[RMDB]
RNA sequence: GGGAACGACUCGAGUAGAGUCGAAAAUCAUUGAGAUGCUGGGCGCUAUGGUCGUCCUCCUCCGGCUGACCUCCUUCUCAGCUGCUGACCGGCGCCGCACAGGCGGCAUAUCAGCUUCGUGUGCAAAAAAAGAAUGGUCGGUUCGCCGACCAUUCAAGACCAAAUAGUUGUUCGCAACUAUUUGGUCAAAAGAAACAACAACAACAAC
Reactivity to 2A3 in 0.01 (KOAc 150mM, MgCl2 10mM, bicine 150mM(pH8.5), 24C), signal-to-noise 1, nucleotides 027 to 156: u110c050a040u070u180g030a060g030a090u090g030c080u100g040g020g010c010g000c020u110a150u300g060g010u050c010g040u030c030c020u060c010c000u010c010c030g040g000c020u020g000a040c020c050u140c040c040u120u080c020u030c010a000g000c020u040g010c050u080g020a000c000c000g050g000c010g010c030c010g000c020a020c030a030g000g100c030g020g000c030a040u070a060u220c050a050g000c010u040u040c050g190u040g000u030g050c030a160a000a000a000a000a000a000g010a010a000u000g010g000u000c010g000g010u040u000c100g000c010c000g000a000c000c000a000u000u000c000a010a000
Reactivity to DMS in 0.01 (KOAc 150mM, MgCl2 10mM, bicine 150mM(pH8.5), 24C), signal-to-noise 1, nucleotides 027 to 156: u000c030a140u000u010g030a150g010a090u000g020c050u000g020g020g020c040g030c020u000a040u010g050g010u000c000g020u010c090c010u000c030c000u000c050c000g010g000c000u010g010a040c010c060u000c140c070u010u020c090u000c020a040g000c000u000g000c050u000g020a060c050c030g010g000c040g050c000c010g010c070a090c080a060g020g010c040g000g000c020a090u020a050u000c080a100g000c070u000u000c060g030u010g000u000g000c040a020a000a050a040a040a130a180g000a010a000u000g010g020u000c000g020g050u000u000c300g050c030c000g000a030c000c000a010u020u000c010a060a150

This 207-nucleotide RNA was probed chemically with 2A3 and DMS. The RNA was probed in 150 mM KOAc, 10 mM MgCl2 and 150 mM bicine (pH 8.5) at 24 C. DMS adducts were read by reverse transcription with MarathonRT. The 2A3 profile rests on 1,241 reads. The DMS profile rests on 2,436 reads. Source: RMDB library M2RFPK, as collected in RNAgym. 2A3 adducts were read by reverse transcription with SuperScript II with manganese. Values cover nucleotides 27 to 156.